RNA sequence: GGGAACGACUCGAGUAGAGUCGAAAAGAUAUGGAUGACUGUCGCUUUUGACGGAAGAUCGGAAACGAUCUCCCGAUAAGCGAAGUCAUCCUAAGUCAAAACUGGAGACGGUUCGCCGUCUCCAGAACAUACAUCGUUGCUUCGGCAACGAUGUAUGAAAAGAAACAACAACAACAAC
Reactivity to DMS in 0.01 (KOAc 150mM, MgCl2 10mM, bicine 150mM(pH8.5), 24C), signal-to-noise 3, nucleotides 027 to 126: g000a030u000a290u000g000g010a010u000g000a020c000u000g020u000c000g010c000u000u000u000u000g010a300c300g000g000a030a010g000a000u000c010g020g020a100a050a100c000g010a030u000c000u000c010c000c000g000a090u000a010a020g000c020g000a050a010g000u000c000a000u000c000c000u000a000a070g010u010c020a030a050a130a150c020u010g000g000a000g010a020c000g000g000u000u010c260g020c010c010g010u000c000u000c000c000a000g000a040a080
Reactivity to 2A3 in 0.01 (KOAc 150mM, MgCl2 10mM, bicine 150mM(pH8.5), 24C), signal-to-noise 3, nucleotides 027 to 126: g000a010u040a030u100g000g000a000u000g010a020c000u170g150u300c010g000c010u200u270u210u150g030a010c000g000g010a040a050g020a010u020c010g020g000a000a050a010c010g000a000u000c000u020c000c000c000g060a080u070a170a030g000c000g020a000a000g000u000c000a010u010c000c000u000a020a000g020u000c020a020a000a130a150c000u010g000g000a010g000a010c020g000g080u060u180c300g050c120c030g000u010c010u010c000c010a000g000a000a000